[RMDB]
Structure probing data (2A3) for a 207-nucleotide construct.
The 2A3 profile rests on 670 reads.
The RNA was probed in 150 mM KOAc, 10 mM MgCl2 and 150 mM bicine (pH 8.5) at 24 C.
Values are in units of 0.01, from 0 to 300, in steps of 10.
Reactivities are given for positions 27 through 156.
RNA sequence: GGGAACGACUCGAGUAGAGUCGAAAACGCAGAGGGUUCUGAUAACAAAGAACCUAGAUAGCCGCAUCGGUAUUAUAGGAUGUAGUCGGUGAGCCGGAAUGCCUGCAUCAUAAGCCUAUAAGUAAAUUUAAGUGUAAUCACUUCGGUGAUUACACAAGUUAGGAGAUCUCUUCGGAGAUCUCCUAACAAAAGAAACAACAACAACAAC
Reactivity to 2A3 in 0.01 (KOAc 150mM, MgCl2 10mM, bicine 150mM(pH8.5), 24C), signal-to-noise 1, nucleotides 027 to 156: c060g030c050a030g040a070g130g040g000u010u000c010u010g050a120u120a150a040c050a040a150a000g010a000a010c010c000u020a010g070a070u030a010g020c020c030g020c030a050u070c050g040g000u080a100u280u060a120u130a110g040g040a010u040g010u080a030g070u030c040g040g020u050g030a010g010c000c020g000g010a040a000u090g020c020c010u010g030c020a060u030c000a030u120a010a060g000c010c010u070a070u030a120a050g050u070a060a170a300u160u240u200a170a040g000u000g000u000a000a000u000c000a000c030u000u050c130g120g000u000g000a000u000u010a000c000a000c000a000a000